[RMDB]
RNA sequence: GGGAACGACUCGAGUAGAGUCGAAAACUGACUGGAGUGGAGAUGCAAACCAUGCAACGUCUGACAAAUUUAAGACUUCAAAACAUGAAAAGUGAUACUUUUCAAGAGAGACUUAGACACAUGAUACCACGUCAAACUGAUUUCAAUCUGAUGCGGAGACUGCAUUUACGUUCGCGUAAAUGCAGUCAAAAGAAACAACAACAACAAC
Reactivity to 2A3 in 0.01 (KOAc 150mM, MgCl2 10mM, bicine 150mM(pH8.5), 24C), signal-to-noise 2, nucleotides 027 to 156: c010u040g020a010c040u070g080g020a100g040u060g000g110a170g080a070u070g000c010a010a030a240c120c010a010u090g000c010a110a010c150g010u020c000u060g030a020c050a070a140a070u090u060u050a040a020g010a040c000u080u020c120a060a100a090a080c060a050u040g070a010a000a000a000g030u040g010a040u140a280c010u010u050u000u000c040a060a000g030a000g000a000g000a110c000u080u010a010g000a060c060a000c020a120u090g010a000u020a030c000c050a000c020g040u040c050a110a120a010c020u060g040a110u010u090u280c090a060a030u040c090u050g040a030u060g060c000g000g000a000